[RMDB]
RNA sequence: GGGAACGACUCGAGUAGAGUCGAAAAGGAUUAUGAACGUAGCAAUAUUUAUGGUACUGCUACUAUUGGUGUAUGUAAGUACACUGAUAUUGAUGUUAAUUCAGCUUUGAAUAUAUGUUUUGACAUACCAUAAUGCCAAGUUCGCUUGGCAUUAUGGAAAAGAAACAACAACAACAAC
Reactivity to 2A3 in 0.01 (KOAc 150mM, MgCl2 10mM, bicine 150mM(pH8.5), 24C), signal-to-noise 5, nucleotides 027 to 126: g020g010a030u020u090a050u210g090a090a040c060g000u000a000g000c000a010a020u010a060u050u180u080a180u220g080g000u020a020c000u000g020c000u000a000c020u000a010u020u010g030g000u000g000u020a000u010g100u070a090a110g000u000a000c010a000c000u000g000a000u020a030u010u130g100a070u080g040u080u040a050a020u010u030c020a020g050c110u130u130u230g060a130a010u070a020u040a040u130g030u010u030u030u040g060a020c030a030u080a050
Reactivity to DMS in 0.01 (KOAc 150mM, MgCl2 10mM, bicine 150mM(pH8.5), 24C), signal-to-noise 2, nucleotides 027 to 126: g000g000a060u010u000a040u000g010a080a110c130g020u000a010g000c000a030a010u000a020u000u000u010a060u020g020g020u000a020c080u000g020c000u000a010c020u000a010u000u000g000g020u010g020u010a000u000g000u010a060a150g010u000a000c000a010c000u000g010a000u000a020u010u000g030a090u000g000u000u000a020a050u000u000c020a080g000c190u000u010u020g020a110a110u010a090u010a050u010g010u000u010u000u000g010a060c090a060u000a110

Structure probing data (2A3 and DMS) for a 177-nucleotide construct.
For DMS, 2,912 sequencing reads were counted.
The reactions ran in a buffer of 150 mM KOAc, 10 mM MgCl2 and 150 mM bicine (pH 8.5), at 24 C.
For 2A3 the reverse transcriptase was SuperScript II with manganese.